An RNA of 177 nucleotides, treated with 2A3 and read out base by base.
RNA sequence: GGGAACGACUCGAGUAGAGUCGAAAAAGGCGAGUUACUCUUAUUGUUGAGGCCUCUCUAACAAUGAAAUUUGAUACCCUUCGCAGAGUUAUUUGCCGAAUCGUAAGAUGUCCAGAUUUUUCAUUUUUAUAAUGUGCCAUUUCGAUGGCACAUUAUAAAAAGAAACAACAACAACAAC
Reactivity to 2A3 in 0.01 (KOAc 150mM, MgCl2 10mM, bicine 150mM(pH8.5), 24C), signal-to-noise 1, nucleotides 027 to 126: a000g000g000c000g000a010g010u020u070a000c000u100c000u040u080a150u140u090g060u000u040g050a230g060g000c040c000u040c010u000c050u100a000a150c010a000a050u070g060a100a000a140u100u130u050g070a060u150a230c010c000c000u000u000c010g040c080a000g010a000g030u000u060a060u100u010u010g000c000c000g000a000a030u020c050g010u020a000a140g030a060u060g100u000c090c030a090g030a200u070u130u000u000u050c030a090u050u000u000u000
Values cover nucleotides 27 to 126.
Conditions: 150 mM KOAc, 10 mM MgCl2 and 150 mM bicine (pH 8.5), 24 C.